[RMDB]
RNA sequence: GGGAACGACUCGAGUAGAGUCGAAAAAGGGGAUGUGUUCGCACAUCCCCUAAAAAACCUUUGUGUAGUUGUCAGCUGGCCUUCAACCCAUUGGGUUGAGGCACAGCUUGGAUUUACUACACUCUGGUAAAAACGUACAGGAUUCGUCCUGUACGAACUAUUCGACUCGUUUCGACGAGUCGAAUAGAAAAGAAACAACAACAACAAC
Reactivity to 2A3 in 0.01 (KOAc 150mM, MgCl2 10mM, bicine 150mM(pH8.5), 24C), signal-to-noise 1, nucleotides 027 to 156: a000g060g000g010g000a040u040g060u010g000u070u090c110g010c070a010c000a000u010c000c000c000c000u070a000a000a000a000a000a000c000c000u000u000u010g000u000g000u000a000g010u000u020g010u010c000a000g010c010u020g010g030c040c020u300u300c020a000a040c010c010c130a270u210u300g030g000g000u000u000g000a000g000g000c010a000c000a000g030c000u000u030g000g000a020u030u180u300a010c000u010a000c000a000c010u020c050u010g010g000u110a250a000a000a000a000c010g000u000a000c000a000g000g020a030u040u210c220g010u040c040c000u000g000u000a020c000g000a000a000

Chemical mapping of a 207-nucleotide RNA with 2A3. The RNA was probed in 150 mM KOAc, 10 mM MgCl2 and 150 mM bicine (pH 8.5) at 24 C. The 2A3 profile rests on 822 reads. High 2A3 reactivity points to a flexible backbone, as in loops and unpaired stretches. It was measured as part of the RMDB library RNAMAK.